[RMDB]
The record gives the reactivity of an RNA of 207 nucleotides to DMS and 2A3. The data come from the RNA Mapping Database (RMDB), library RNAMAK. Reactivities are given for positions 27 through 156. DMS adducts were read by reverse transcription with MarathonRT.

RNA sequence: GGGAACGACUCGAGUAGAGUCGAAAAGCAUCAACUUCGGUUGAUGCAAAAAGAUAUGGAGCGACUCCCCACCCGAUGAGGAGCGUCGGAAACGACGCUCUACCCACCAUAUCGGAGGUCGCUCCUAAGUCAAAAAAGCUAACGUUCGCGUUAGCAACCUAUAUUGUGGAUUCGUCCACAAUAUAGGAAAAGAAACAACAACAACAAC
Reactivity to DMS in 0.01 (KOAc 150mM, MgCl2 10mM, bicine 150mM(pH8.5), 24C), signal-to-noise 1, nucleotides 027 to 156: g030c000a020u010c000a050a030c010u000u010c300g050g010u000u000g010a020u000g000c010a000a000a030a060a050g030a100u000a210u020g020g030a040g050c020g000a060c020u000c050c010c000c070a170c240c080c110g000a070u000g000a250g030g000a030g030c010g040u010c000g000g010a120a090a220c030g020a060c000g000c000u000c000u000a000c010c050c050a180c030c010a190u010a100u000c020g010g010a200g040g010u000c010g000c000u010c000c000u000a020a090g000u010c010a000a070a110a070a100a090g000c000u000a030a000c010g040u000u030c300g010c070g000u000u000a000g020c010a050a060
Reactivity to 2A3 in 0.01 (KOAc 150mM, MgCl2 10mM, bicine 150mM(pH8.5), 24C), signal-to-noise 4, nucleotides 027 to 156: g000c000a000u000c000a000a010c010u080u110c270g100g010u000u000g000a000u000g000c000a030a030a000a050a000g020a010u030a010u040g000g000a000g000c000g010a000c030u150c070c050c030c030a050c030c030c010g050a070u080g050a120g060g000a000g000c010g000u000c010g000g010a020a020a010c000g000a000c000g010c000u000c000u000a000c000c010c010a100c020c040a120u080a030u300c000g000g000a000g000g020u000c000g000c000u000c000c000u000a000a000g010u000c010a000a000a030a070a140a000g020c050u060a000a020c000g040u090u160c300g000c020g110u000u000a000g000c010a020a000
Conditions: 150 mM KOAc, 10 mM MgCl2 and 150 mM bicine (pH 8.5), 24 C.